Structure probing data (2A3 and DMS) for a 177-nucleotide construct.
2A3 adducts were read by reverse transcription with SuperScript II with manganese.
RNA sequence: GGGAACGACUCGAGUAGAGUCGAAAAUUACAUAAGUCUAACACCUUGUUUCGGACUAACAAGGGCGUAUGGAGGAUGGCCGAACCUCCAUAGUUAGACGUCCGAGAACCAGCCGAAAUGAAAAAGACACCCAUAGUCAUUUCGAUGACUAUGGGUGAAAAGAAACAACAACAACAAC
Reactivity to 2A3 in 0.01 (KOAc 150mM, MgCl2 10mM, bicine 150mM(pH8.5), 24C), signal-to-noise 4, nucleotides 027 to 126: u160u120a040c050a070u140a130a080g010u010c010u030a070a010c020a040c020c000u010u010g020u000u010u040c130g140g040a150c080u030a030a010c020a010a020g010g010g000c010g110u040a010u010g000g000a000g020g000a040u100g120g000c030c010g020a040a050c010c000u000c000c000a000u000a020g000u020u050a010g010a040c010g000u000c020c010g060a070g010a130a050c050c030a030g040c000c020g040a030a020a080u150g070a120a080a030a000a000g050a010
Reactivity to DMS in 0.01 (KOAc 150mM, MgCl2 10mM, bicine 150mM(pH8.5), 24C), signal-to-noise 2, nucleotides 027 to 126: u040u050a100c100a110u020a090a110g000u030c010u010a050a050c060a110c020c030u000u010g000u030u000u000c050g000g020a080c120u020a060a060c030a020a050g000g010g000c210g000u010a020u000g000g010a020g000g010a210u010g000g000c030c040g020a130a200c010c000u000c000c010a000u010a020g020u030u000a030g000a050c000g010u020c010c010g000a090g000a140a120c090c100a130g000c020c000g010a070a010a050u010g000a040a060a070a170a110g000a200